[RMDB]
The record gives the reactivity of an RNA of 207 nucleotides to 2A3.
RNA sequence: GGGAACGACUCGAGUAGAGUCGAAAAUAACCCCUAUACUUGUAUAGGCGAUUAAUAAAUCUUCUGUAAAUGCUGUAAGAGGAUUACCCCUUGAGGUUUCAGCACUAGGGUGCUCUAGCGAUUAAUCACAACGAUUUGGUCUUCGGACCAAAUCGAACCGUACUUUGUUGUUCGCAACAAAGUACGGAAAAGAAACAACAACAACAAC
Reactivity to 2A3 in 0.01 (KOAc 150mM, MgCl2 10mM, bicine 150mM(pH8.5), 24C), signal-to-noise 1, nucleotides 027 to 156: u030a000a020c020c020c000c000u010a000u000a030c040u090u180g010u090a060u050a030g010g000c040g050a070u030u140a050a130u110a110a060a000u000c050u110u000c010u030g150u200a120a100a120u050g000c020u030g040u070a020a000g000a020g070g000a000u000u050a030c000c000c000c000u010u040g050a140g130g030u050u030u190c030a000g050c010a020c030u010a020g070g040g060u060g040c010u000c010u030a030g030c000g000a050u130u040a090a080u120c030a040c020a220a170c040g000a000u000u000u000g000g030u000c010u030u050c250g120g000a000c000c000a000a000a000u000c000g000a020a010
2A3 adducts were read by reverse transcription with SuperScript II with manganese. The RNA was probed in 150 mM KOAc, 10 mM MgCl2 and 150 mM bicine (pH 8.5) at 24 C. For 2A3, 587 sequencing reads were counted. Source: RMDB library M2RFPK, as collected in RNAgym.